[RMDB]
RNA sequence: GGGAACGACUCGAGUAGAGUCGAAAAGAUAUGGACUCGACCUGGCUAUGAAGUAGGCUCUGUCGGAAACGACAGAGGCCUAUGGAGCCAGGUCGAGUCCUAAGUCAAACCACAGUUCGCUGUGGAACCGUGGUAAUAUCUUCGGAUAUUACCACGGAAAAGAAACAACAACAACAAC
Reactivity to DMS in 0.01 (KOAc 150mM, MgCl2 10mM, bicine 150mM(pH8.5), 24C), signal-to-noise 1, nucleotides 027 to 126: g010a030u060a300u010g000g000a000c020u000c000g030a010c030c000u000g000g020c010u000a300u030g000a110a230g010u000a010g000g020c000u000c000u000g000u000c020g010g010a190a110a220c000g030a030c000a000g000a010g010g000c000c000u010a000u000g000g030a010g000c000c000a000g010g010u000c030g000a010g030u000c010c000u000a000a070g020u000c030a110a120a200c000c000a000c000a050g010u000u020c260g020c050u010g000u000g000g000a120a130